An RNA of 207 nucleotides, treated with DMS and 2A3 and read out base by base. DMS adducts were read by reverse transcription with MarathonRT. 2A3 adducts were read by reverse transcription with SuperScript II with manganese. The DMS profile rests on 4,342 reads. For 2A3, 4,380 sequencing reads were counted.
RNA sequence: GGGAACGACUCGAGUAGAGUCGAAAAGUGCGCCAUCUCCAGGAUGCCAGAGGUACAGCCUUUUACAAAGCCAUGGAAAAGGGACUGACUCUCACCUUAAGGAUGGAGUCCUUGGUUGUAGCAUGGUCUUGCUGACUUAGGUGCAUCUGGUGAUGUGGUGAGUAUGAUUGUUCGCAAUCAUACUCACAAAAGAAACAACAACAACAAC
Reactivity to DMS in 0.01 (KOAc 150mM, MgCl2 10mM, bicine 150mM(pH8.5), 24C), signal-to-noise 2, nucleotides 027 to 156: g000u000g020c060g050c040c030a100u000c040u010c020c040a170g030g030a050u010g000c040c100a120g000a050g020g010u010a080c070a080g020c010c010u000u000u000u010a040c040a030a120a060g020c060c100a080u010g000g010a100a040a100a110g000g000g000a130c020u010g000a070c020u000c020u000c050a070c060c010u000u010a140a100g050g030a110u010g020g000a060g010u010c000c070u000u020g020g030u010u010g010u000a090g010c030a070u000g000g010u000c010u000u010g000c000u000g010a160c020u010u010a110g030g030u010g000c000a010u000c010u010g000g000u010g000a100u000g020u010g000
Reactivity to 2A3 in 0.01 (KOAc 150mM, MgCl2 10mM, bicine 150mM(pH8.5), 24C), signal-to-noise 6, nucleotides 027 to 156: g120u120g050c070g070c010c010a010u000c010u000c010c010a040g180g050a070u000g020c020c020a030g010a020g060g060u150a200c020a020g020c020c030u070u130u050u070a100c090a070a110a040g040c040c040a070u080g080g020a030a030a030a010g030g000g040a040c010u020g030a020c000u010c010u030c080a050c030c020u090u230a100a050g030g010a060u080g020g010a010g000u030c000c010u020u020g120g040u160u160g220u250a050g110c020a020u030g000g020u060c030u090u140g220c000u020g020a040c010u020u020a010g040g020u090g040c010a010u010c000u000g000g020u020g000a020u020g040u080g040

About this RNA
The data come from the RNA Mapping Database (RMDB), library OK3TST.